[RMDB]
RNA sequence: GGGAACGACUCGAGUAGAGUCGAAAACUGGCGCCCUCAGGCAGGUCGCUGACGUGUUGUGUGGAGAUGCUGUGCAGCCAGGUUUGCCGAUCGCCACCGUCGAGGGUGAGCACGGCGCGGUGCGAGCAUCGGGGCUAAUAUUCGUAUUAGCCCCGAUAAAAGAAACAACAACAACAAC
Reactivity to DMS in 0.01 (KOAc 150mM, MgCl2 10mM, bicine 150mM(pH8.5), 24C), signal-to-noise 3, nucleotides 027 to 126: c040u010g000g010c020g010c100c020c020u010c040a160g020g030c140a060g000g000u010c030g000c070u010g000a080c120g000u010g020u000u000g010u000g010u010g010g010a130g000a060u010g020c020u000g010u010g020c000a110g020c030c040a140g010g000u010u000u000g000c000c000g000a060u010c100g000c000c000a030c030c020g010u000c200g010a150g010g000g010u000g000a130g040c030a250c040g000g000c050g010c070g000g010u000g020c010g000a070g020c060
Reactivity to 2A3 in 0.01 (KOAc 150mM, MgCl2 10mM, bicine 150mM(pH8.5), 24C), signal-to-noise 1, nucleotides 027 to 126: c030u030g050g000c000g020c020c030c000u040c100a080g050g240c030a030g020g050u040c010g060c140u040g030a050c140g080u080g000u030u120g060u050g070u110g060g040a200g020a040u040g110c040u060g030u180g050c020a100g110c000c010a040g030g030u090u100u120g030c020c020g010a080u040c060g050c050c010a020c010c050g140u210c090g050a090g050g000g000u010g040a040g000c000a000c000g050g030c020g000c020g030g000u000g010c040g030a010g030c000

The record gives the reactivity of an RNA of 177 nucleotides to DMS and 2A3.
For DMS, 4,852 sequencing reads were counted.
For 2A3, 1,033 sequencing reads were counted.
Conditions: 150 mM KOAc, 10 mM MgCl2 and 150 mM bicine (pH 8.5), 24 C.